[RMDB]
RNA sequence: GGGAACGACUCGAGUAGAGUCGAAAAGAUAUGGAUCCCGUACCAACAGCAACAGCUAGCUCGGAAACGAGCUAGACAUGCUGGGUACGGAUCCUAAGUCAAAGGAGUGCGGUUCGCCGCACUCCAACUAGUAGAUGGUCUUCGGACCAUCUACUAGAAAAGAAACAACAACAACAAC
Reactivity to DMS in 0.01 (KOAc 150mM, MgCl2 10mM, bicine 150mM(pH8.5), 24C), signal-to-noise 3, nucleotides 027 to 126: g020a080u000a300u000g020g000a000u000c160c030c050g000u000a000c000c000a170a300c080a030g000c060a060a300c290a120g000c000u000a000g000c000u000c000g020g000a070a160a180c000g010a010g010c000u000a000g000a010c100a080u000g000c000u000g000g000g000u000a020c000g000g000a000u000c000c000u000a020a050g010u000c010a090a140a130g010g000a020g000u000g020c000g020g030u010u000c240g040c000c000g000c010a000c000u010c000c000a010a030
Reactivity to 2A3 in 0.01 (KOAc 150mM, MgCl2 10mM, bicine 150mM(pH8.5), 24C), signal-to-noise 3, nucleotides 027 to 126: g050a010u090a060u140g000g000a010u100c170c070c000g010u000a010c000c050a160a300c020a140g100c010a020a120c010a160g060c010u000a000g000c000u000c010g060g010a010a050a030c000g010a000g000c010u010a000g010a030c000a030u060g010c010u030g060g000g000u000a000c000g030g010a000u000c000c000u000a090a030g060u030c080a140a030a160g000g000a020g020u020g000c010g000g130u090u210c300g060c150c000g020c000a000c010u000c020c000a000a010
This 177-nucleotide RNA was probed chemically with DMS and 2A3. The RNA was probed in 150 mM KOAc, 10 mM MgCl2 and 150 mM bicine (pH 8.5) at 24 C. 2A3 adducts were read by reverse transcription with SuperScript II with manganese.